[RMDB]
RNA sequence: GGGAACGACUCGAGUAGAGUCGAAAACAUCUGAUAGGGUCUGCGAAGGAGCAAAAACCAUAGAAUCACCAGUAUGAACACCAAGUGGGUCGAAAUUUUCCAUAUUACAUACUGUAAUACAGUUACCACCCUUGGAGAGAUUCGUCUCUCCAAGGGUAAAAGAAACAACAACAACAAC
Reactivity to DMS in 0.01 (KOAc 150mM, MgCl2 10mM, bicine 150mM(pH8.5), 24C), signal-to-noise 2, nucleotides 027 to 126: c040a080u010c060u020g050a080u000a050g000g000g000u000c040u010g010c070g010a090a100g000g030a060g040c060a020a070a050a060a040c090c080a070u000a040g000a100a050u000c060a080c100c030a060g010u010a040u000g000a140a080c090a080c140c040a020a080g010u040g020g030g030u010c060g000a070a010a090u000u000u000u010c040c010a120u000a010u000u010a080c050a040u010a020c110u010g010u000a030a010u020a290c060a070g010u000u010a130c110c090
Reactivity to 2A3 in 0.01 (KOAc 150mM, MgCl2 10mM, bicine 150mM(pH8.5), 24C), signal-to-noise 1, nucleotides 027 to 126: c000a060u070c050u050g070a000u090a090g070g000g000u000c010u090g010c100g090a100a040g070g040a030g000c010a010a000a010a080a110c030c000a010u040a080g100a010a020u030c020a000c040c010a010g020u080a000u090g160a120a050c020a040c110c000a070a100g010u030g030g080g070u090c100g050a040a000a110u120u100u030u040c000c010a030u040a030u030u150a030c010a050u130a100c020u030g030u030a050a060u100a060c020a000g020u050u000a030c060c000

Chemical mapping of a 177-nucleotide RNA with DMS and 2A3. The reactions ran in a buffer of 150 mM KOAc, 10 mM MgCl2 and 150 mM bicine (pH 8.5), at 24 C. Source: RMDB library OK2TST, as collected in RNAgym.